Structure probing data (2A3 and DMS) for a 177-nucleotide construct. DMS adducts were read by reverse transcription with MarathonRT. Conditions: 150 mM KOAc, 10 mM MgCl2 and 150 mM bicine (pH 8.5), 24 C. Source: RMDB library M2PK50, as collected in RNAgym.
[RMDB]
RNA sequence: GGGAACGACUCGAGUAGAGUCGAAAACCGAUUCCCUUCGGGGAAUCGGAAAGAAAGCACGAAAAUAAAAUAAAGGGAAUGGGAACGUGCACCCACCCAUAAAAAGAACCAUCUUCGGAUGGUUCAAGUGAUCUCUAUUGUUCGCAAUAGAGAUCACAAAAGAAACAACAACAACAAC
Reactivity to 2A3 in 0.01 (KOAc 150mM, MgCl2 10mM, bicine 150mM(pH8.5), 24C), signal-to-noise 2, nucleotides 027 to 126: c010c000g000a000u000u000c000c030c000u000u070c200g050g010g000g000a010a000u000c030g000g030a020a000a000g040a000a040a000g010c010a000c060g200a300a150a100a060u230a040a070a060a010u180a080a130a050g020g010g000a140a280u110g020g000g000a030a050c010g000u010g000c000a030c000c000c000a000c000c000c000a030u180a020a100a020a010a030g000a000a000c000c000a010u000c010u040u120c210g130g010a000u000g010g000u010u000c000a000a000
Reactivity to DMS in 0.01 (KOAc 150mM, MgCl2 10mM, bicine 150mM(pH8.5), 24C), signal-to-noise 1, nucleotides 027 to 126: c000c010g030a030u010u000c000c000c000u000u010c240g010g010g000g010a000a000u010c000g000g000a040a040a030g000a080a080a150g030c010a000c000g010a170a160a050a020u010a060a090a010a030u000a040a110a130g000g000g000a140a110u000g000g000g000a090a090c050g000u020g020c020a300c000c000c000a050c000c000c000a050u040a030a080a060a120a030g000a000a010c000c000a000u010c000u000u000c230g050g000a000u000g000g000u000u000c010a010a040